[RMDB]
RNA sequence: GGGAACGACUCGAGUAGAGUCGAAAACCACAGAUCUUCGGAUCUGUGGAAACAAGAAAUACUGUCAGUUGAGACAGACACAAAUACAUUGAGUGUACAAUGAAAGCGAUUGCUUCGGCAAUCGCAACCGAUUUGACUACUUCGGUAGUCAAAUCGGAAAAGAAACAACAACAACAAC
Reactivity to 2A3 in 0.01 (KOAc 150mM, MgCl2 10mM, bicine 150mM(pH8.5), 24C), signal-to-noise 1, nucleotides 027 to 126: c000c010a000c000a020g010a010u040c020u070u160c190g150g010a000u000c000u010g010u020g000g000a020a020a000c090a060a050g230a030a090a040u140a110c000u000g000u000c060a170g070u260u220g180a050g020a150c020a010g060a020c000a000c020a100a120a010u280a000c050a040u110u090g020a030g130u140g040u030a100c020a080a130u210g130a120a070a000g000c030g000a010u000u000g020c000u040u040c270g080g000c000a000a000u020c000g020c000a000a010